[RMDB]
RNA sequence: GGGAACGACUCGAGUAGAGUCGAAAACCCCGCACCUUCGGGUGCGGGGAACUACCGAGAAUGCGACUCGGUUUAUACGCAAAACCCUUGGAAACAAGGGAAUUCACGAACAGUUCGCUGUUCGUAACUCCAUACAAUUGUUCGCAAUUGUAUGGAGAAAAGAAACAACAACAACAAC
Reactivity to DMS in 0.01 (KOAc 150mM, MgCl2 10mM, bicine 150mM(pH8.5), 24C), signal-to-noise 3, nucleotides 027 to 126: c000c000c000c010g040c000a000c000c000u000u000c230g060g020g030u010g000c020g000g030g000g000a000a020c060u000a110c000c000g000a000g000a120a080u010g020c160g000a130c000u000c000g010g010u000u010u000a030u020a090c160g000c170a030a040a120a200c000c000c000u010u000g000g010a150a110a170c010a010a000g000g000g000a020a010u000u020c170a060c000g000a000a010c010a010g010u000u000c210g010c000u000g010u000u000c000g000u000a040a110
Reactivity to 2A3 in 0.01 (KOAc 150mM, MgCl2 10mM, bicine 150mM(pH8.5), 24C), signal-to-noise 3, nucleotides 027 to 126: c000c020c000c000g060c030a030c000c010u070u110c300g150g030g000u000g050c020g040g000g000g000a000a010c020u020a010c000c020g000a000g030a090a120u140g070c090g110a080c040u000c010g000g010u000u040u010a060u020a020c040g000c070a030a040a080a270c010c010c000u000u000g030g000a040a050a040c010a010a010g020g000g040a000a020u060u070c040a010c030g010a000a000c010a000g020u060u050c120g090c100u010g010u020u000c000g000u000a010a020